[RMDB]
RNA sequence: GGGAACGACUCGAGUAGAGUCGAAAACAUCCACUGCUACGGCAGUGGAUGAACGAGGUAGGUACGCCUACCUCGAAAGCGGGAUGUACGCAUAUACAUUAAACGUCCAUGGUACGCCAUGGACGAAUCCCGCAUAGCUAUUCGUAGCUAUGCGGGAAAAAGAAACAACAACAACAAC
Reactivity to DMS in 0.01 (KOAc 150mM, MgCl2 10mM, bicine 150mM(pH8.5), 24C), signal-to-noise 1, nucleotides 027 to 126: c010a020u010c000c000a000c000u000g000c000u000a160c290g080g010c010a010g080u000g020g030a000u000g000a020a120c030g020a000g010g000u000a010g020g030u000a100c270g050c000c000u000a010c000c000u000c020g010a010a070a030g010c030g010g000g000a030u010g000u000a000c010g000c040a220u010a040u000a040c010a010u020u020a060a040a170c000g030u010c000c000a010u010g000g010u000a100c300g150c000c000a010u000g000g000a000c000g000a000a060
Reactivity to 2A3 in 0.01 (KOAc 150mM, MgCl2 10mM, bicine 150mM(pH8.5), 24C), signal-to-noise 1, nucleotides 027 to 126: c000a000u020c000c010a010c000u000g010c000u000a060c160g210g010c000a000g000u020g000g000a000u000g000a010a010c010g020a000g000g000u000a000g020g010u040a020c180g000c020c000u000a000c000c000u000c000g000a020a060a000g000c000g050g200g010a010u010g010u020a000c000g060c110a040u120a010u000a220c010a000u070u130a050a050a080c010g020u010c000c000a000u010g010g000u060a050c250g030c100c000a000u000g010g020a000c010g000a000a000